[RMDB]
RNA sequence: GGGAACGACUCGAGUAGAGUCGAAAAGAUAUGGAUCCGGAUGAGCGCCUAACACAUCGGAAACGAUGUGGACGGAACUACGCUCAUACGGAUCCUAAGUCAAAAGUAUCACCUUCGGGUGAUACAACGAUUGAAUAGUGUUCGCACUAUUCAAUCGAAAAGAAACAACAACAACAAC
Reactivity to DMS in 0.01 (KOAc 150mM, MgCl2 10mM, bicine 150mM(pH8.5), 24C), signal-to-noise 7, nucleotides 027 to 126: g000a040u000a300u010g010g010a010u000c000c000g000g000a010u000g000a010g010c010g000c000c010u000a150a300c000a000c000a000u000c000g000g000a150a090a210c000g010a010u000g010u000g010g010a200c300g000g000a070a040c130u010a300c020g010c000u000c000a000u000a010c000g000g000a000u000c000c000u000a000a070g000u000c030a060a040a160a120g010u000a010u000c000a000c000c000u000u010c200g020g000g010u000g000a000u000a000c000a060a080
Reactivity to 2A3 in 0.01 (KOAc 150mM, MgCl2 10mM, bicine 150mM(pH8.5), 24C), signal-to-noise 3, nucleotides 027 to 126: g030a010u080a040u140g000g010a010u000c010c010g010g010a010u010g010a000g000c020g030c020c000u060a120a020c000a000c000a000u010c000g030g030a070a060a020c020g010a000u010g000u020g010g010a010c070g000g010a020a010c020u130a060c100g010c000u000c010a000u010a000c010g000g000a000u000c000c000u000a000a000g010u020c020a000a010a000a210g000u010a000u010c010a010c000c000u020u090c300g140g000g000u000g000a000u000a010c000a000a020